[RMDB]
RNA sequence: GGGAACGACUCGAGUAGAGUCGAAAACCCGUUUUGUUCGCAAAACGGGACUCAUCUUUGCUUGGCAGCAUUGCAGGUGUUGGCUGGACUGCUGGCUUAUCCUUGGAGGCAGUUUCGACUGCCUCAAGCUUGGAUACAAAUUCGUUUGUAUCCAAGCAAAAGAAACAACAACAACAAC
Reactivity to 2A3 in 0.01 (KOAc 150mM, MgCl2 10mM, bicine 150mM(pH8.5), 24C), signal-to-noise 6, nucleotides 027 to 126: c000c000c000g000u010u000u010u010g020u020u050c190g000c100a000a000a000a000c000g000g010g030a050c020u020c050a180u040c050u060u110u110g060c030u070u120g070g000c020a020g020c010a090u010u160g030c040a040g020g070u080g090u300u160g120g060c010u020g010g050a070c010u030g000c010u020g080g000c000u050u100a110u110c020c020u030u110g160g010a000g000g000c000a010g010u010u020u110c160g050a020c010u020g020c000c020u000c000a000a000
Reactivity to DMS in 0.01 (KOAc 150mM, MgCl2 10mM, bicine 150mM(pH8.5), 24C), signal-to-noise 6, nucleotides 027 to 126: c000c000c000g000u000u000u000u000g010u010u000c190g030c010a010a000a010a010c010g010g000g010a110c060u010c080a100u010c060u000u010u010g010c030u000u000g010g000c050a040g000c050a070u010u000g000c060a040g000g010u000g020u000u010g010g010c010u000g000g000a090c070u000g010c030u000g000g000c040u000u000a070u000c040c030u010u010g020g010a020g000g010c000a010g010u000u000u010c170g010a040c000u000g000c000c000u000c000a020a040